[RMDB]
RNA sequence: GGGAACGACUCGAGUAGAGUCGAAAAGGCAGGACUUACCAAGUCUCGGGGCCGAUGAGGGUUGGCUCAAAGUAGGGUUUUGACUUGAAAACUCAAGCUGUGACCCCAAAACGAUGGAGGUAAAUGAAAAAUCCAUCUGCCUUCGGGCAGAUGGAAACGUAUUAAAUGCGUUCGCGCAUUUAAUACGAAAAGAAACAACAACAACAAC
Reactivity to DMS in 0.01 (KOAc 150mM, MgCl2 10mM, bicine 150mM(pH8.5), 24C), signal-to-noise 1, nucleotides 027 to 156: g020g000c010a070g030g000a070c040u000u010a080c050c050a150a120g060u010c010u000c020g030g010g000g030c020c050g060a070u000g020a130g000g040g020u020u000g000g000c020u020c070a050a140a080g050u000a080g080g000g010u010u000u000u000g020a020c070u000u050g010a060a140a100a160c140u000c040a020a050g000c030u010g000u010g000a130c010c010c010c060a040a040a040a060c110g030a150u010g020g020a050g020g070u000a000a120a120u000g020a010a090a060a090a100u010c000c000a020u000c000u010g000c000c000u000u000c300g030g000g010c020a000g000a020u000g000g000a000a010a020
Reactivity to 2A3 in 0.01 (KOAc 150mM, MgCl2 10mM, bicine 150mM(pH8.5), 24C), signal-to-noise 3, nucleotides 027 to 156: g030g010c040a020g030g030a020c010u040u090a120c060c040a060a030g030u000c060u040c100g030g000g020g030c020c030g020a020u060g040a080g000g030g010u060u060g010g000c020u020c040a040a060a010g120u130a090g000g040g020u020u070u110u050g050a070c000u010u020g010a010a050a190a140c050u040c060a020a010g000c050u070g070u130g130a070c020c000c000c030a020a120a000a010c080g030a030u080g040g020a030g000g030u060a040a130a030u200g070a050a090a020a040a030u020c000c000a010u000c000u000g000c000c000u030u040c150g010g020g000c020a000g000a000u000g020g000a010a000a000